[RMDB]
RNA sequence: GGGAACGACUCGAGUAGAGUCGAAAAGUACUGGCCCUCAGGCCGUCGAUCUGUCACACACGGCCGUACGAUCUGAGCGCGUACUCGCUCGCGUACUGCGCCUAUAGGAUCUAUGAGCGCAGCGCCGUCCGCCCAGAGUUUUCGAACUCUGGGCGGAAAAAGAAACAACAACAACAAC
Reactivity to DMS in 0.01 (KOAc 150mM, MgCl2 10mM, bicine 150mM(pH8.5), 24C), signal-to-noise 1, nucleotides 027 to 126: g010u020a020c000u010g050g010c020c060c040u000c040a070g010g000c030c010g040u000c070g040a050u000c000u020g020u010c170a190c280a150c300a040c090g020g050c050c000g010u000a000c010g000a000u000c050u000g000a020g020c200g000c050g000u000a020c010u000c100g040c040u000c080g000c010g000u010a090c010u010g020c010g010c010c010u000a030u020a060g010g000a050u010c050u020a040u000g000a020g040c010g000c010a050g000c060g000c010c160g000